[RMDB]
RNA sequence: GGGAACGACUCGAGUAGAGUCGAAAAGAUAUGGAAUUCACAAGCUUUUGACGCUCCAGCAUCGGAAACGAUGUGAGGAGCGAUAAGCUUGGAAUUCCUAAGUCAAAGGGGUGCUUCGGCACCCCAACAUAAUGAUAAUCUUCGGAUUAUCAUUAUGAAAAGAAACAACAACAACAAC
Reactivity to DMS in 0.01 (KOAc 150mM, MgCl2 10mM, bicine 150mM(pH8.5), 24C), signal-to-noise 8, nucleotides 027 to 126: g010a050u000a300u010g000g000a020a010u000u000c010a140c010a010a010g010c000u000u000u000u000g030a270c090g010c000u000c000c000a300g000c000a010u000c000g010g000a060a070a170c000g010a010u000g010u000g000a110g020g010a010g020c000g020a010u000a010a000g010c000u000u000g000g010a010a000u000u010c000c000u000a010a060g010u000c030a070a160a170g010g010g000g030u000g010c000u000u010c210g030g010c000a000c000c000c000c010a010a020
Reactivity to 2A3 in 0.01 (KOAc 150mM, MgCl2 10mM, bicine 150mM(pH8.5), 24C), signal-to-noise 6, nucleotides 027 to 126: g000a000u070a040u160g010g010a030a020u010u010c070a080c010a300a010g010c030u080u180u250u300g300a200c110g000c000u000c000c000a010g000c000a010u010c000g010g020a040a060a030c010g000a000u000g030u020g060a300g020g010a000g000c000g000a000u000a010a000g000c000u000u000g000g000a000a000u000u010c000c000u010a070a010g050u010c040a020a080a140g000g010g000g000u010g000c010u080u150c280g190g000c000a010c000c000c000c000a000a000